[RMDB]
RNA sequence: GGGAACGACUCGAGUAGAGUCGAAAAGGACGCGUUCAAGGCGUCGGAUUUAGAUAUUUUACACAACGCAUUGCAAUGAACUAUAACAUUGUCGGUACUGUUCAAAAUGUAGAUGACUAUGUAGAGAAUGUUAUGUCAUCUUCGGAUGACAUAACAUAAAAGAAACAACAACAACAAC
Reactivity to DMS in 0.01 (KOAc 150mM, MgCl2 10mM, bicine 150mM(pH8.5), 24C), signal-to-noise 4, nucleotides 027 to 126: g010g010a020c020g020c010g030u000u000c260a150a170g020g010c000g010u000c000g030g000a110u000u000u000a070g000a090u000a070u000u010u010u000a040c060a070c070a060a070c130g010c050a050u010u010g010c050a030a040u000g000a030a070c100u000a090u000a120a060c040a050u000u010g030u010c140g010g000u010a030c090u020g000u000u010c120a040a060a110a110u000g010u000a010g000a070u000g020a070c040u000a060u020g020u010a050g000a100g000a070
Reactivity to 2A3 in 0.01 (KOAc 150mM, MgCl2 10mM, bicine 150mM(pH8.5), 24C), signal-to-noise 3, nucleotides 027 to 126: g080g000a010c040g050c040g040u120u140c190a070a040g170g000c020g000u000c000g020g050a060u110u140u060a050g030a080u090a070u150u100u060u080a050c070a010c030a050a090c040g010c060a040u040u120g000c050a010a090u050g020a050a010c080u110a060u050a220a010c010a110u020u170g100u110c050g020g010u010a030c020u070g110u120u090c050a090a070a110a130u050g000u030a010g000a170u010g020a040c030u100a050u070g050u070a040g000a010g020a190
The data come from the RNA Mapping Database (RMDB), library OK2TRN. An RNA of 177 nucleotides, treated with DMS and 2A3 and read out base by base. 2A3 adducts were read by reverse transcription with SuperScript II with manganese. The 2A3 profile rests on 2,051 reads. For DMS the reverse transcriptase was MarathonRT.